[RMDB]
RNA sequence: GGGAACGACUCGAGUAGAGUCGAAAAGAUAUGGAUCCCUGUAGACAUGCUGAGUGUUACAGCUGUAGUACAUCGGAAACGAUGUACUACAGAAGGUGGCUCAGCAACAGCUACGGGAUCCUAAGUCGUUUGUUUAGAUCUUCGGAUCUAAACAAACAAAAGAAACAACAACAACAAC
Reactivity to 2A3 in 0.01 (KOAc 150mM, MgCl2 10mM, bicine 150mM(pH8.5), 24C), signal-to-noise 2, nucleotides 027 to 126: g060a040u140a070u200g000g000a020u000c000c050c110u090g020u010a000g050a110c070a110u110g050c000u000g010a030g000u140g140u300u270a090c060a090g080c030u010g000u020a010g000u000a010c000a000u000c010g030g020a070a060a010c010g000a000u020g000u000a000c000u010a000c000a000g000a010a020g180g040u080g110g000c020u020c010a000g030c010a010a000c030a000g020c000u000a000c000g000g000g010a000u000c000c000u000a030a010g100u030c080
Reactivity to DMS in 0.01 (KOAc 150mM, MgCl2 10mM, bicine 150mM(pH8.5), 24C), signal-to-noise 2, nucleotides 027 to 126: g000a050u000a300u010g000g020a020u000c000c000c010u020g080u000a010g020a050c170a190u010g010c000u010g010a030g010u000g020u010u000a040c040a220g000c000u000g000u030a000g010u000a000c010a000u010c000g000g000a110a150a190c000g030a010u010g000u000a000c000u000a000c000a000g000a030a010g020g040u010g000g040c000u000c000a000g010c000a000a010c270a130g010c020u000a010c000g040g000g000a000u000c000c000u020a030a130g020u000c140

An RNA of 177 nucleotides, treated with 2A3 and DMS and read out base by base.
It was measured as part of the RMDB library TTRINS.
The reactions ran in a buffer of 150 mM KOAc, 10 mM MgCl2 and 150 mM bicine (pH 8.5), at 24 C.
2A3 is a SHAPE reagent: it acylates the 2'-hydroxyl of flexible nucleotides of all four kinds.
High DMS reactivity at an A or C suggests that its Watson-Crick edge is free.